[RMDB]
An RNA of 177 nucleotides, treated with DMS and 2A3 and read out base by base. High DMS reactivity at an A or C suggests that its Watson-Crick edge is free. As a SHAPE reagent, 2A3 marks flexible, mostly unpaired nucleotides at the ribose 2'-OH. It was measured as part of the RMDB libraries RFM100 and RFMREP. Conditions: 150 mM KOAc, 10 mM MgCl2 and 150 mM bicine (pH 8.5), 24 C.

RNA sequence: GGGAACGACUCGAGUAGAGUCGAAAAGGGGUCCCGCCUCCCACCCCGCCUCUGGACUUGUCUCUUUCCCCGCGCGCGCGGACAGAGCCGGCGUUUAGGCCCGAGCGAGCCCGGGGGCCGCCGGCCGAAAGAGAGUUAAGUUCGCUUAACUCUCUUUAAAAGAAACAACAACAACAAC
Reactivity to DMS in 0.01 (KOAc 150mM, MgCl2 10mM, bicine 150mM(pH8.5), 24C), signal-to-noise 5, nucleotides 027 to 126: g010g000g010g010u000c040c030c010g020c040c020u000c030c010c030a180c050c030c020c040g030c040c020u000c040u010g010g000a070c070u010u010g000u020c030u000c040u010u000u010c030c030c000c080g020c070g010c060g000c040g010c040g010g000a070c120a070g010a130g010c000c010g010g000c150g020u010u020u030a130g000g010c020c000c020g000a090g000c050g010a090g010c020c010c020g030g000g000g010g010c050c000g020c000c010g000g010c000c020g000
Reactivity to 2A3 in 0.01 (KOAc 150mM, MgCl2 10mM, bicine 150mM(pH8.5), 24C), signal-to-noise 4, nucleotides 027 to 126: g000g000g010g030u050c010c010c000g020c010c020u000c000c010c000a040c000c000c010c010g020c010c010u040c030u040g020g040a080c020u060u110g050u100c010u000c000u070u060u030c000c010c000c000g010c010g000c000g010c010g030c020g030g020a050c030a050g050a030g020c010c000g010g000c010g010u050u060u150a070g020g040c000c010c010g020a030g030c040g030a020g000c010c020c010g050g000g000g020g000c000c000g000c000c000g010g010c000c000g020
Values cover nucleotides 27 to 126. For 2A3, 5,723 sequencing reads were counted.